[RMDB]
RNA sequence: GGGAACGACUCGAGUAGAGUCGAAAACAUUGAAAGAAGGAACUGUCAUUGAUAUUAUUAACGAGGCAAAACGAUACUAUCCAUUCGUAGAAGGAGGAUCAGGAAAAUUCAGGCUUCUACAAAUUGAUCGUAUUACGUGAUUCGUCACGUAAUACGAAAAAGAAACAACAACAACAAC
Reactivity to 2A3 in 0.01 (KOAc 150mM, MgCl2 10mM, bicine 150mM(pH8.5), 24C), signal-to-noise 5, nucleotides 027 to 126: c040a030u120u190g080a070a080a030g060a050a060g080g030a050a040c050u060g040u090c050a110u060u100g060a050u090a050u270u150a080u070u140a130a030c060g010a010g030g020c020a020a000a020a020c030g020a020u040a140c030u050a080u030c020c030a060u050u070c050g010u010a000g000a020a000g020g040a030g020g000a010u000c050a050g200g070a160a070a020a010u010u020c000a010g300g000c010u020u000c000u020a010c010a020a070a050u090u100g030a040
Reactivity to DMS in 0.01 (KOAc 150mM, MgCl2 10mM, bicine 150mM(pH8.5), 24C), signal-to-noise 4, nucleotides 027 to 126: c080a100u010u020g020a070a090a070g010a120a090g010g000a120a070c090u010g010u000c060a120u010u010g010a070u020a030u000u010a110u010u000a070a090c150g000a040g000g010c040a020a030a040a070c080g000a040u010a120c130u000a060u020c020c040a120u010u010c070g020u000a040g000a040a050g010g010a220g010g000a010u000c100a100g030g010a080a050a070a050u000u000c040a030g040g000c010u000u000c010u010a020c050a040a030a030u000u000g010a110
The record gives the reactivity of an RNA of 177 nucleotides to 2A3 and DMS.
It was measured as part of the RMDB library OK2TST.
The DMS profile rests on 3,552 reads.
For DMS the reverse transcriptase was MarathonRT.
Conditions: 150 mM KOAc, 10 mM MgCl2 and 150 mM bicine (pH 8.5), 24 C.